[RMDB]
RNA sequence: GGGAACGACUCGAGUAGAGUCGAAAACUGCCGCCGGGACGCAGUGAUCCUCGCAGGGUCGCACGGUCGCCUCGGGUCGGCCUCGUGUCGGCUCGACCUGCGAGGGGAGCGAGUGGCGAGCCCGACCGUAUUACUAACAGUUCGCUGUUAGUAAUACAAAAGAAACAACAACAACAAC
Reactivity to 2A3 in 0.01 (KOAc 150mM, MgCl2 10mM, bicine 150mM(pH8.5), 24C), signal-to-noise 7, nucleotides 027 to 126: c020u040g020c010c010g010c020c020g060g050g150a050c040g010c020a140g250u000g010a010u010c000c000u000c010g000c000a010g020g020g060u180c050g000c060a090c070g060g010u030c020g020c010c020u020c010g020g000g000u020c010g000g020c010c000u090c120g280u300g020u020c000g000g000c010u010c020g050a100c000c000u000g000c000g000a000g000g000g000g000a010g010c000g010a050g130u080g020g000c000g000a050g030c010c020c010g000a010c010c030
Reactivity to DMS in 0.01 (KOAc 150mM, MgCl2 10mM, bicine 150mM(pH8.5), 24C), signal-to-noise 5, nucleotides 027 to 126: c060u000g020c030c030g000c010c010g020g010g010a160c050g020c000a300g010u010g010a030u010c010c000u000c030g020c020a020g000g010g020u010c180g000c090a100c060g010g000u000c010g020c180c100u000c000g000g000g010u000c010g000g010c010c000u010c180g000u010g020u000c010g010g000c000u000c010g010a060c010c010u000g000c010g000a030g000g000g000g000a030g020c000g010a210g010u000g000g000c000g000a100g010c010c100c010g000a030c110c080